[RMDB]
RNA sequence: GGGAACGACUCGAGUAGAGUCGAAAAGAUAUGGAAUGAGUAGUAACAAGGAGCAACAGCUCGGAAACGAGACAUGCUCCCGCCCUACCAUUCCUAAGUCAAACCUGCUACCUUCGGGUAGCAGGAACAGCUAGUAAUACUUCGGUAUUACUAGCUGAAAAGAAACAACAACAACAAC
Reactivity to 2A3 in 0.01 (KOAc 150mM, MgCl2 10mM, bicine 150mM(pH8.5), 24C), signal-to-noise 5, nucleotides 027 to 126: g000a020u060a020u100g000g020a010a010u030g010a090g130u000a010g020u060a160a110c130a290a160g010g000a000g010c010a010a150c060a190g050c020u000c010g010g010a050a080a020c010g000a000g010a040c060a070u070g000c000u000c000c010c010g100c000c000c010u000a010c010c000a000u000u000c010c000u010a090a010g040u020c030a050a030a160c000c000u000g000c000u010a000c000c010u020u070c190g170g000g000u000a000g020c000a000g000g000a000a010
Reactivity to DMS in 0.01 (KOAc 150mM, MgCl2 10mM, bicine 150mM(pH8.5), 24C), signal-to-noise 6, nucleotides 027 to 126: g010a040u000a300u010g010g000a010a000u000g010a130g020u010a010g010u010a070a110c220a220a060g010g000a010g020c010a020a060c270a170g000c000u000c000g010g000a060a090a180c010g010a000g000a020c080a170u000g010c000u000c000c000c030g010c300c180c010u010a010c010c000a020u000u000c000c000u000a010a100g000u000c040a060a090a190c010c000u000g000c000u000a000c010c000u000u000c230g020g010g030u000a010g000c010a010g010g000a030a040